[RMDB]
RNA sequence: GGGAACGACUCGAGUAGAGUCGAAAAGCUCGGAGACGAGCAAGGCUGACAAAACCCUGUCCCAACCUCCACGUGGUGUCGGCUGGAUAAUGCUGCAUUAUGUUGCAUUUAUCAACUGGGAACUAAAAAUCCGCGCUGAGUUCGCUCAGCGCGGAUUAAAAGAAACAACAACAACAAC
Reactivity to 2A3 in 0.01 (KOAc 150mM, MgCl2 10mM, bicine 150mM(pH8.5), 24C), signal-to-noise 1, nucleotides 027 to 126: g050c000u000c000g000g040a100g010a020c000g000a000g000c000a000a000g020g040c030u020g000a000c000a000a140a100a250c000c000c040u000g060u060c020c020c000a000a020c010c030u090c000c160a070c020g140u240g070g000u030g000u060c000g000g020c000u000g060g050a000u000a010a000u000g000c030u000g000c000a030u080u150a210u300g050u090u000g000c000a000u060u060u060a050u020c030a030a040c010u110g000g000g000a070a000c050u110a010a020a020

Chemical mapping of a 177-nucleotide RNA with 2A3. The reactions ran in a buffer of 150 mM KOAc, 10 mM MgCl2 and 150 mM bicine (pH 8.5), at 24 C. The data come from the RNA Mapping Database (RMDB), library OK1LIB. For 2A3 the reverse transcriptase was SuperScript II with manganese.